[RMDB]
RNA sequence: GGGAACGACUCGAGUAGAGUCGAAAAUAAAGUCGGUCAAGACGUAGACCGAAAAGCGAUGGAAGGAACCAGGGCUAGGUUCCGUAAGCCCGAACGAUCUAAGUCAUUGAUCGAAAACAUCGCGAAAGGGAUACAUUAUCUUCGGAUAAUGUAUCCCAAAAGAAACAACAACAACAAC
Reactivity to DMS in 0.01 (KOAc 150mM, MgCl2 10mM, bicine 150mM(pH8.5), 24C), signal-to-noise 6, nucleotides 027 to 126: u020a080a100a120g020u010c010g010g000u000c000a150a120g010a130c300g040u020a150g000a000c000c010g000a000a050a110a110g000c000g000a000u000g000g020a210a180g000g020a010a020c020c020a110g040g010g020c120u020a120g010g000u000u000c000c010g010u030a070a070g030c000c000c000g020a120a220c010g000a010u000c000u000a030a120g000u070c230a170u040u010g000a010u000c000g000a070a060a050a120c000a000u000c010g000c000g010a050a080a120
Reactivity to 2A3 in 0.01 (KOAc 150mM, MgCl2 10mM, bicine 150mM(pH8.5), 24C), signal-to-noise 4, nucleotides 027 to 126: u230a020a070a000g080u030c020g010g000u000c040a130a030g280a160c150g060u050a040g000a000c020c000g010a020a000a000a040g010c000g000a000u010g030g070a060a080g040g030a030a000c020c030a050g040g050g070c110u180a110g020g020u000u000c000c010g010u000a000a020g030c010c000c000g000a040a040c010g000a000u000c020u070a110a110g230u170c110a120u060u100g010a000u000c000g000a040a000a010a000c000a000u000c010g020c040g010a070a020a040